[RMDB]
Source information: An RNA of 207 nucleotides, treated with 2A3 and DMS and read out base by base. For DMS the reverse transcriptase was MarathonRT. Conditions: 150 mM KOAc, 10 mM MgCl2 and 150 mM bicine (pH 8.5), 24 C. Values are in units of 0.01, from 0 to 300, in steps of 10. For DMS, 2,403 sequencing reads were counted. High 2A3 reactivity points to a flexible backbone, as in loops and unpaired stretches.
RNA sequence: GGGAACGACUCGAGUAGAGUCGAAAAGGGCAGCGACGACAUGAUCACCGAUGCCCCGAUCGUGGAUGUUGAGUGCUUCUCGAACGUCUACGCCGUCGCGGACACGCUGUCCGAGGACGUCCGUCAAUGGUUCCACGCGCUCAACGGCCGGAAGGUCCUAUUAACGCAGCUUCGGCUGCGUUAAUAGAAAAGAAACAACAACAACAAC
Reactivity to 2A3 in 0.01 (KOAc 150mM, MgCl2 10mM, bicine 150mM(pH8.5), 24C), signal-to-noise 3, nucleotides 027 to 156: g000g000g010c000a020g040c020g040a060c050g020a020c110a180u300g050a270u120c050a010c100c000g040a030u030g020c010c020c000c010g020a030u060c050g040u190g030g030a040u030g000u000u000g000a000g010u010g010c010u110u100c100u040c090g000a000a000c010g060u050c080u010a010c000g000c000c000g000u000c000g000c050g010g010a030c080a020c150g290c250u230g000u000c000c000g010a040g000g060a010c020g000u120c140c020g000u050c110a040a080u060g170g020u020u000c010c010a090c000g010c000g000c020u000c000a000a000c000g010g010c000c000g050g040a130a040g020g000u010c020
Reactivity to DMS in 0.01 (KOAc 150mM, MgCl2 10mM, bicine 150mM(pH8.5), 24C), signal-to-noise 1, nucleotides 027 to 156: g000g020g050c010a030g040c010g030a050c030g020a050c060a200u020g000a260u000c020a130c040c010g000a030u020g020c000c000c020c010g000a120u000c050g040u000g000g030a050u000g010u000u000g000a040g030u000g050c030u000u010c040u000c060g010a050a060c000g030u000c000u000a050c000g030c040c020g030u000c000g000c040g040g000a030c010a220c300g040c170u030g020u000c000c000g000a090g010g010a020c000g000u000c010c030g000u000c100a150a110u000g000g010u000u010c030c030a120c230g020c040g000c010u000c030a050a050c020g010g010c030c010g020g020a090a120g010g000u000c010